Chemical mapping of a 177-nucleotide RNA with DMS and 2A3. 2A3 adducts were read by reverse transcription with SuperScript II with manganese. The data come from the RNA Mapping Database (RMDB), library OK2TST. Reactivities are given for positions 27 through 126. Conditions: 150 mM KOAc, 10 mM MgCl2 and 150 mM bicine (pH 8.5), 24 C. Values are in units of 0.01, from 0 to 300, in steps of 10.
[RMDB]
RNA sequence: GGGAACGACUCGAGUAGAGUCGAAAAGCGCGAAGGACAAGGCGACCGGCAAGGAAAACAAGAUCACGAUCAAGGCGAACUCGGGCCUGUCCGAAGCCGAGAUCGAGAAGAUGGUGAAGGACGCGGAGGGUAUAGUACCAUUCGUGGUACUAUACCCAAAAGAAACAACAACAACAAC
Reactivity to DMS in 0.01 (KOAc 150mM, MgCl2 10mM, bicine 150mM(pH8.5), 24C), signal-to-noise 4, nucleotides 027 to 126: g050c080g040c060g000a120a100g000g010a050c050a050a120g000g000c030g040a100c090c050g020g010c070a080a070g000g000a070a050a090a090c170a080a130g000a090u000c030a090c040g000a020u000c030a030a300g000g040c000g000a060a090c160u000c030g010g000g010c100c070u000g020u000c020c010g000a040a110g000c010c000g000a300g010a010u000c010g000a080g000a070a120g000a060u010g010g010u010g020a090a100g000g000a100c120g020c080g000g000a160
Reactivity to 2A3 in 0.01 (KOAc 150mM, MgCl2 10mM, bicine 150mM(pH8.5), 24C), signal-to-noise 2, nucleotides 027 to 126: g020c030g020c040g050a070a020g040g010a050c040a100a000g050g010c030g030a030c040c000g080g010c020a050a080g080g000a080a060a070a030c070a040a080g030a120u040c000a020c030g000a010u020c010a040a040g030g000c040g060a130a070c040u010c040g020g000g010c010c090u060g080u070c010c000g000a010a000g010c030c000g020a020g010a020u040c010g010a000g020a070a010g050a020u080g000g000u040g040a060a030g040g000a020c050g050c070g100g040a060